[RMDB]
RNA sequence: GGGAACGACUCGAGUAGAGUCGAAAAAAUGUGGUUAUUAAGUAGUAGCGCAACAUCUGCCAAAAUAGCUGCCGAACUAGGUAUAGGGCUUUCUGUUGGAACAUUUUUGCUACCAGAUAUAAAUGCGGAGACAUGCAUUAUUCGUAAUGCAUGUCUCAAAAGAAACAACAACAACAAC
Reactivity to DMS in 0.01 (KOAc 150mM, MgCl2 10mM, bicine 150mM(pH8.5), 24C), signal-to-noise 5, nucleotides 027 to 126: a040a030u000g010u020g000g030u010u000a030u010u010a080a150g030u030a030g000u020a070g020c080g030c090a060a080c110a080u030c080u000g020c040c040a040a070a050a060u010a040g010c030u000g000c030c070g000a050a100c140u020a050g020g000u010a050u010a060g020g010g010c040u020u010u000c070u020g030u000u000g010g000a100a070c060a060u000u000u000u010u000g000c030u010a140c040c030a050g020a080u040a070u030a040a030a070u030g000c140g010
Reactivity to 2A3 in 0.01 (KOAc 150mM, MgCl2 10mM, bicine 150mM(pH8.5), 24C), signal-to-noise 5, nucleotides 027 to 126: a000a030u210g030u110g040g040u070u090a060u090u040a140a070g020u060a030g040u030a030g040c040g030c050a010a050c010a110u040c020u050g040c000c000a000a050a020a140u110a060g060c070u020g000c030c000g080a140a110c040u050a100g000g040u070a060u060a110g030g000g080c000u010u090u020c090u080g050u030u060g060g050a090a010c030a140u050u060u080u130u100g000c000u010a050c010c000a010g070a060u060a000u120a180a170a040u210g060c080g080